Source: RMDB library OK1LIB, as collected in RNAgym. The record gives the reactivity of an RNA of 177 nucleotides to 2A3 and DMS. Values cover nucleotides 27 to 126. DMS adducts were read by reverse transcription with MarathonRT. The 2A3 profile rests on 4,002 reads.

RNA sequence: GGGAACGACUCGAGUAGAGUCGAAAAAUGCGUUGAUGGAGAUAUUUUAGAUUUCGCCUCGCAUAUAUGUCAGAUCUCACUUAGAAUAUUGUAUCCAUACAGUAAGUAUGACUUUCUAGGGAUGCACGCUCCUAGUAAUCUUCGGAUUACUAGGAGCAAAAGAAACAACAACAACAAC
Reactivity to 2A3 in 0.01 (KOAc 150mM, MgCl2 10mM, bicine 150mM(pH8.5), 24C), signal-to-noise 7, nucleotides 027 to 126: a000u040g000c020g010u040u070g100a300u230g210g020a060g020a010u070a140u070u170u070u110a210g060a110u040u010u030c020g030c010c010u010c000g030c050a010u030a010u010a020u100g170u120c070a020g010a210u030c010u010c050a050c060u090u130a020g050a150a060u210a120u170u150g040u060a050u000c040c000a040u040a100c000a080g130u170a150a010g020u010a140u200g130a090c000u040u030u000c010u020a010g050g040g000a060u030g030c020a010c070
Reactivity to DMS in 0.01 (KOAc 150mM, MgCl2 10mM, bicine 150mM(pH8.5), 24C), signal-to-noise 2, nucleotides 027 to 126: a010u010g000c040g010u000u030g000a070u010g010g010a050g000a030u020a030u040u000u070u030a110g040a040u000u040u000c000g000c030c000u000c000g020c000a000u000a030u020a080u020g000u030c080a160g000a130u000c010u000c040a090c060u000u000a000g010a040a040u000a090u020u000g000u010a110u000c040c060a070u000a190c030a140g030u010a060a090g040u000a100u000g000a050c040u000u000u000c050u020a060g000g000g000a030u020g020c170a080c210